[RMDB]
RNA sequence: GGGAACGACUCGAGUAGAGUCGAAAAGUUUAAUAGUUACGUUAGCACAUAUAAUACUAGUCAGCACAAAUAAUCCAUCAGUCAUCACAGAAAGUUCUGUUGGACACAGGCUCCACCUGGGAGAUGCGACAGAGAGGUAAUUCGUUACCUCUCUGUCAAAAGAAACAACAACAACAAC
Reactivity to DMS in 0.01 (KOAc 150mM, MgCl2 10mM, bicine 150mM(pH8.5), 24C), signal-to-noise 5, nucleotides 027 to 126: g010u000u010u000a070a090u010a090g010u000u000a050c110g000u000u000a060g020c050a070c080a080u010a060u010a060a090u010a080c040u000a050g010u000c060a040g010c050a040c090a050a060a060u010a080a100u000c040c020a060u010c050a040g020u000c060a050u010c070a060c080a070g000a060a090a090g000u000u000c030u010g000u000u010g010g010a120c140a060c080a030g010g000c030u010c050c040a060c090c040u000g000g000g000a070g000a050u010g000c220
Reactivity to 2A3 in 0.01 (KOAc 150mM, MgCl2 10mM, bicine 150mM(pH8.5), 24C), signal-to-noise 3, nucleotides 027 to 126: g030u000u070u150a140a120u110a060g070u050u110a040c080g040u030u060a020g050c050a010c030a050u140a000u040a070a150u080a130c050u040a040g030u040c050a020g030c060a000c010a070a090a040u120a070a040u060c000c000a010u020c010a010g050u040c010a020u060c000a070c010a070g080a050a130a000g020u120u060c010u010g040u050u050g040g010a020c030a000c000a100g080g000c030u020c020c010a070c020c070u060g040g010g030a100g000a050u060g030c040